This 177-nucleotide RNA was probed chemically with DMS and 2A3.

RNA sequence: GGGAACGACUCGAGUAGAGUCGAAAAGAUAUGGACCCUAGACUCGCGAGGGCUUCGGAAACGAAGCCUCCCCACCGAACUACGAGCUAGGGUCCUAAGUCAAAACAGGACGCUUCGGCGUCCUGAACAAAUAAGGGAAGUUCGCUUCCCUUAUUUGAAAAGAAACAACAACAACAAC
Reactivity to DMS in 0.01 (KOAc 150mM, MgCl2 10mM, bicine 150mM(pH8.5), 24C), signal-to-noise 7, nucleotides 027 to 126: g010a020u000a060u010g000g000a030c000c000c000u010a020g000a170c000u000c010g010c160g000a070g010g000g010c000u010u000c010g010g000a020a020a050c000g010a020a010g010c000c010u000c010c040c140c160a110c200c110g010a090a090c150u010a300c010g000a020g000c010u000a000g010g000g010u000c000c000u000a000a030g000u000c020a070a070a120a170c010a010g010g000a020c000g010c000u000u010c150g030g010c000g010u000c000c000u000g000a040a110
Reactivity to 2A3 in 0.01 (KOAc 150mM, MgCl2 10mM, bicine 150mM(pH8.5), 24C), signal-to-noise 5, nucleotides 027 to 126: g010a010u010a010u050g010g000a000c000c000c000u020a140g170a300c010u030c030g300c080g130a040g010g090g000c000u000u000c000g000g000a000a010a010c000g000a000a000g010c010c010u060c010c000c000c010a160c010c090g130a250a150c110u160a080c300g000a010g000c010u010a000g000g010g000u000c000c000u000a000a000g010u000c010a000a000a010a040c010a000g020g000a000c020g020c000u060u130c290g140g000c010g000u000c000c000u000g000a000a010
The data come from the RNA Mapping Database (RMDB), library TTRDEL.